[RMDB]
RNA sequence: GGGAACGACUCGAGUAGAGUCGAAAACAGCGGGUGUACUGGUUGAUCUGGCUGACGCUCCGCAAAGGGAGCUUGAUCUGCGUUCCCUGAGUCACGCAGGUGCUCCGCUCAUCACUUCCGUGAUGAUGGAGCGAAUCUCGUCCACUGAGAUCGGGGAGUAGGACAAUCGAUUCGUCGAUUGUCCUACAAAAGAAACAACAACAACAAC
Reactivity to DMS in 0.01 (KOAc 150mM, MgCl2 10mM, bicine 150mM(pH8.5), 24C), signal-to-noise 2, nucleotides 027 to 156: c040a110g050c050g010g020g020u030g020u000a090c040u010g000g020u000u000g000a070u010c000u000g000g000c060u000g000a130c070g020c020u000c000c000g010c110a060a120a250g000g010g010a020g030c050u000u010g020a050u010c000u020g010c050g000u000u010c030c030c080u000g020a120g010u000c030a070c020g000c080a080g020g020u000g000c060u010c020c000g040c130u040c000a030u000c010a010c000u010u010c210c180g010u000g010a040u000g010a100u000g010g000a020g030c010g000a020a050u000c060u010c020g000u010c050c070a130c070u010g010a150g000a070u020c010g000g030g000g010a300
Reactivity to 2A3 in 0.01 (KOAc 150mM, MgCl2 10mM, bicine 150mM(pH8.5), 24C), signal-to-noise 3, nucleotides 027 to 156: c030a010g010c080g000g030g020u060g050u120a070c020u080g120g000u050u080g050a130u000c020u010g040g060c050u010g030a020c020g000c020u020c010c000g040c110a130a050a000g080g000g020a020g010c060u050u080g090a050u040c030u040g020c020g030u040u020c000c000c070u050g030a010g030u060c010a000c070g010c000a020g050g030u060g000c020u000c000c000g040c040u030c000a010u000c000a000c060u300u140c100c220g000u000g000a010u000g000a010u030g010g010a010g020c010g020a030a030u000c010u000c030g090u050c030c040a080c130u080g020a020g010a110u080c020g010g000g010g010a080